[RMDB]
RNA sequence: GGGAACGACUCGAGUAGAGUCGAAAAAUCUUAUAUAUAAAACAUACCUGACUAGACACAUUGAUGGAAGAAUUCCAGUGAUUGAGAGGUUGGGAAAGUACUUUCACUCAACUUAUGUUACGCAGACGUGUACCCUAAGUUUCGACUUAGGGUACACAAAAGAAACAACAACAACAAC
Reactivity to 2A3 in 0.01 (KOAc 150mM, MgCl2 10mM, bicine 150mM(pH8.5), 24C), signal-to-noise 1, nucleotides 027 to 126: a000u000c030u280u040a100u060a060u010a000u100a290a030a030a080c010a030u130a160c000c030u010g100a280c000u060a000g060a100c010a030c000a120u030u080g230a090u030g030g030a010a010g060a100a080u110u030c000c000a000g070u040g040a010u040u040g030a040g030a030g300g000u040u040g020g000g000a020a020a020g070u030a090c030u060u090u060c040a070c060u010c060a180a040c040u050u050a000u000g070u060u000a100c100g010c130a030g040a030c100